[RMDB]
RNA sequence: GGGAACGACUCGAGUAGAGUCGAAAAUCAUAGCUUCACCAGCGCGACCUGGUCCUCCACGAGCUGGCCCGCGGCCGCGAGCACAGCUUUUACCUUCCCGCCCACCUCCUCGCGCAGGUACACCGAACUUACAGUUAAAAUUCGUUUUAACUGUAAGAAAAGAAACAACAACAACAAC
Reactivity to 2A3 in 0.01 (KOAc 150mM, MgCl2 10mM, bicine 150mM(pH8.5), 24C), signal-to-noise 5, nucleotides 027 to 126: u070c020a030u050a150g040c050u150u090c050a030c050c020a030g020c030g030c010g040a060c000c030u030g020g030u030c000c010u020c020c010a050c050g010a010g010c010u020g010g010c000c010c010g040c020g070g100c120c130g010c020g000a000g000c040a030c010a300g010c000u030u030u050u050a060c020c000u030u020c010c010c000g010c010c010c000a040c000c010u020c000c010u010c000g020c000g000c020a020g010g010u020a030c060a030c020c010g030a040a030
Reactivity to DMS in 0.01 (KOAc 150mM, MgCl2 10mM, bicine 150mM(pH8.5), 24C), signal-to-noise 9, nucleotides 027 to 126: u010c090a080u010a110g000c070u000u000c090a080c050c030a070g010c030g010c050g000a090c090c050u000g010g000u000c030c020u000c030c040a090c160g000a040g020c010u000g010g000c010c010c020g020c040g010g020c170c130g010c020g010a030g010c020a060c030a030g000c010u000u000u010u000a090c080c070u000u000c010c010c010g000c040c020c030a100c040c020u000c020c030u000c030g020c040g010c040a030g000g010u000a060c120a120c050c040g000a080a170
Chemical mapping of a 177-nucleotide RNA with 2A3 and DMS. It was measured as part of the RMDB library M2PK90. DMS (dimethyl sulfate) methylates the pairing face of unpaired adenines and cytosines. Conditions: 150 mM KOAc, 10 mM MgCl2 and 150 mM bicine (pH 8.5), 24 C.